[RMDB]
RNA sequence: GGGAACGACUCGAGUAGAGUCGAAAAGUUGAAGGAGAAAGAAGGUAACUUGAAGCUGAGUAUCUGGCCCACCGAGGGGCAGGGAGGCAGCUCUUGGCACUGCGCGUCCAGCUGCAAUACCUGCUUGUUGGUGACGCGGACGUAUGAGGGGAAGAUCGAUUACCUGAGAUUUCGAUCUCAGGUAAUCAAAAGAAACAACAACAACAAC
Reactivity to DMS in 0.01 (KOAc 150mM, MgCl2 10mM, bicine 150mM(pH8.5), 24C), signal-to-noise 2, nucleotides 027 to 156: g060u010u010g000a100a100g000g030a140g020a090a020a020g020a090a030g010g000u000a060a090c070u000u010g010a050a080g010c050u010g000a100g030u010a070u000c020u000g020g050c030c070c000a050c040c080g020a130g000g010g030g010c000a000g030g000g000a160g010g020c020a020g000c000u000c020u020u040g040g010c040a100c060u000g000c130g020c040g020u000c040c000a020g020c000u000g000c000a070a120u000a090c050c020u000g090c020u000u000g010u000u000g000g020u000g020a090c040g020c050g000g010a030c080g000u000a070u010g010a040g010g010g020g000a070a040g300a090u000c060
Reactivity to 2A3 in 0.01 (KOAc 150mM, MgCl2 10mM, bicine 150mM(pH8.5), 24C), signal-to-noise 4, nucleotides 027 to 156: g060u070u090g040a030a030g020g010a030g030a050a060a000g060a030a020g050g010u080a070a070c050u080u080g040a030a010g030c050u030g010a010g050u080a090u070c040u050g070g010c030c020c000a010c010c020g020a060g020g000g000g010c000a000g000g010g000a030g100g000c000a000g000c000u010c010u050u080g020g010c120a040c100u160g050c130g040c070g110u000c000c000a010g000c000u010g000c000a000a170u040a160c010c000u010g000c000u010u050g230u050u030g000g000u030g020a010c030g010c010g030g000a000c020g090u120a090u150g020a040g010g000g000g020a020a010g000a030u150c080